[RMDB]
RNA sequence: GGGAACGACUCGAGUAGAGUCGAAAAGAUAUGGAUUGGGCCGAGGCAAGCUCGAUGAAGUCGGAAACGAUGGAGAGCUUGAACUACCUCGGCCAAUCCUAAGUCAAAAGCCUUGUUCGCAAGGCAACAUUCUUUAAGACUUCGGUCUUAAAGAAUGAAAAGAAACAACAACAACAAC
Reactivity to 2A3 in 0.01 (KOAc 150mM, MgCl2 10mM, bicine 150mM(pH8.5), 24C), signal-to-noise 5, nucleotides 027 to 126: g020a000u070a020u130g020g010a010u010u050g190g200g150c010c000g000a000g000g000c000a000a000g000c010u010c040g260a300u040g010a020a010g010u010c010g020g020a060a040a040c010g000a000u030g010g020a030g000a000g030c010u000u000g000a000a000c030u130a050c010c010u000c000g000g000c010c000a000a010u000c000c000u000a010a000g010u000c030a060a000a030a030g000c000c000u020u010g020u040u070c280g010c150a000a000g000g000c000a010a010
Reactivity to DMS in 0.01 (KOAc 150mM, MgCl2 10mM, bicine 150mM(pH8.5), 24C), signal-to-noise 7, nucleotides 027 to 126: g010a040u000a300u000g010g000a010u000u000g020g030g020c010c010g010a010g000g000c010a020a010g010c000u000c000g020a100u000g010a120a160g000u000c000g000g000a140a090a190c020g010a010u000g000g000a050g000a020g010c000u000u000g000a050a040c130u020a300c010c000u000c010g000g000c000c000a000a000u000c000c000u000a030a090g000u010c030a080a090a110a100g000c000c000u000u000g010u010u010c190g030c000a010a010g010g010c000a040a100